[RMDB]
RNA sequence: GGGAACGACUCGAGUAGAGUCGAAAAGAUAUGGAUAUGAUCUCGGUAGACUGCGUUGAAAUCGGAAACGAUGGAGCAGUGUACCGAUCUCAUAUCCUAAGUCAAAAGAUGCGCUUCGGCGCAUCAAGCUGACAUAAUAGUUCGCUAUUAUGUCAGCAAAAGAAACAACAACAACAAC
Reactivity to DMS in 0.01 (KOAc 150mM, MgCl2 10mM, bicine 150mM(pH8.5), 24C), signal-to-noise 6, nucleotides 027 to 126: g000a050u000a300u000g010g000a020u000a000u000g010a010u000c160u000c000g000g010u010a010g010a020c000u000g000c000g010u010u010g000a060a120a020u000c000g000g000a130a100a210c010g000a010u000g000g010a110g020c000a000g020u000g000u000a000c000c000g000a000u000c120u000c000a010u000a010u000c000c000u000a020a070g000u000c050a090a060a130a120g000a010u000g000c000g010c000u000u010c180g030g000c000g020c000a010u000c010a040a090
Reactivity to 2A3 in 0.01 (KOAc 150mM, MgCl2 10mM, bicine 150mM(pH8.5), 24C), signal-to-noise 5, nucleotides 027 to 126: g040a010u070a030u150g000g000a000u000a000u020g010a000u020c000u000c020g000g010u040a070g050a160c010u000g020c010g240u300u060g010a030a030a000u010c000g020g030a080a040a040c010g000a010u010g000g010a020g000c010a000g010u030g050u010a000c000c010g000a000u000c000u000c000a000u000a000u000c000c000u010a090a020g040u020c030a000a000a070a210g000a000u010g000c010g000c030u060u160c300g160g000c010g000c000a000u000c000a000a010
This 177-nucleotide RNA was probed chemically with DMS and 2A3. The reactions ran in a buffer of 150 mM KOAc, 10 mM MgCl2 and 150 mM bicine (pH 8.5), at 24 C. The DMS profile rests on 10,813 reads. Source: RMDB library TTRDEL, as collected in RNAgym. For 2A3, 30,126 sequencing reads were counted.